[RMDB]
This 177-nucleotide RNA was probed chemically with DMS and 2A3.
Reactivities are rounded to 0.1 and cut off at 0 and 3.
RNA sequence: GGGAACGACUCGAGUAGAGUCGAAAAUCCCCCAACAUGUAUUUCCCCAGAUGCCAUCCUACAUGUUCACAUUGAAGAGAUAAGCCUCUCAGAAGGAAGAUAACCAUAGAAAGUUGAAAAGAGAAACACUUAACUUUUGGUUCGCCAAAAGUUAAGUAAAAGAAACAACAACAACAAC
Reactivity to DMS in 0.01 (KOAc 150mM, MgCl2 10mM, bicine 150mM(pH8.5), 24C), signal-to-noise 4, nucleotides 027 to 126: u000c000c000c000c140c100a050a050c090a070u010g000u000a050u010u010u000c020c010c030c050a090g020a090u000g010c010c020a090u000c020c050u000a090c070a020u010g020u000u000c080a090c040a110u000u000g000a080a060g040a090g010a080u000a070a150g000c100c030u000c020u000c080a070g000a100a080g010g000a050a060g000a080u010a080a190c050c030a050u020a070g010a050a090a120g000u010u010g020a060a050a060a120g000a130g000a100a080a070c160
Reactivity to 2A3 in 0.01 (KOAc 150mM, MgCl2 10mM, bicine 150mM(pH8.5), 24C), signal-to-noise 3, nucleotides 027 to 126: u000c030c000c020c000c020a080a000c010a090u090g070u120a110u040u080u040c030c010c000c000a020g050a070u090g040c000c000a050u020c010c040u060a040c000a020u050g030u050u090c030a030c020a110u050u120g070a130a050g060a000g010a040u050a100a050g060c000c010u000c000u000c000a080g030a180a020g030g020a000a020g020a050u110a080a050c010c020a030u050a070g110a040a180a040g040u000u050g050a080a070a000a000g080a010g000a030a060a000c020